An RNA of 207 nucleotides, treated with 2A3 and DMS and read out base by base. For 2A3, 3,952 sequencing reads were counted. For 2A3 the reverse transcriptase was SuperScript II with manganese.
[RMDB]
RNA sequence: GGGAACGACUCGAGUAGAGUCGAAAAAAGAAUGAGGAACAUUAGGCAAGUUCUAGACGAUUGUUAACGCAGGUGAAAUAGCACAGGCGGCCUACUGACAAUGGUUAAGUAAUUUGAUGACACUUCACUGAAAAGAAUGCAGGCCAUUGAGGGAAAAUCAUACCAAAAUGUUCGCAUUUUGGUAUGAAAAAGAAACAACAACAACAAC
Reactivity to 2A3 in 0.01 (KOAc 150mM, MgCl2 10mM, bicine 150mM(pH8.5), 24C), signal-to-noise 4, nucleotides 027 to 156: a000a010g130a060a030u150g010a030g040g000a070a030c030a080u050u090a060g040g000c040a060a030g030u020u040c020u050a030g010a070c040g080a070u010u110g030u070u060a080a020c040g000c020a000g040g000u040g080a090a090a120u120a060g050c010a000c010a060g000g050c020g000g010c010c000u040a040c020u050g040a040c020a020a060u060g020g030u060u060a070a010g020u020a050a120u080u090u170g070a080u070g010a000c010a000c080u040u050c030a030c060u030g040a020a070a030a040g020a030a000u060g010c010a020g040g000c010c020a020u030u040g020a020g010g020g010a000a040a010a060
Reactivity to DMS in 0.01 (KOAc 150mM, MgCl2 10mM, bicine 150mM(pH8.5), 24C), signal-to-noise 3, nucleotides 027 to 156: a050a050g030a090a080u000g010a090g000g000a080a030c060a090u040u010a080g010g040c020a090a090g020u010u000c040u000a150g030a060c030g010a090u000u010g010u010u000a070a080c110g040c040a040g030g040u010g020a080a050a110u010a120g010c020a080c080a070g020g050c060g020g020c050c010u000a070c020u000g000a090c050a030a060u000g010g020u000u010a050a160g020u010a030a100u000u000u010g000a110u000g000a110c080a060c080u000u000c030a110c080u000g020a050a040a060a120g010a030a040u010g010c010a110g020g000c030c020a070u000u010g020a100g010g010g000a040a050a050a170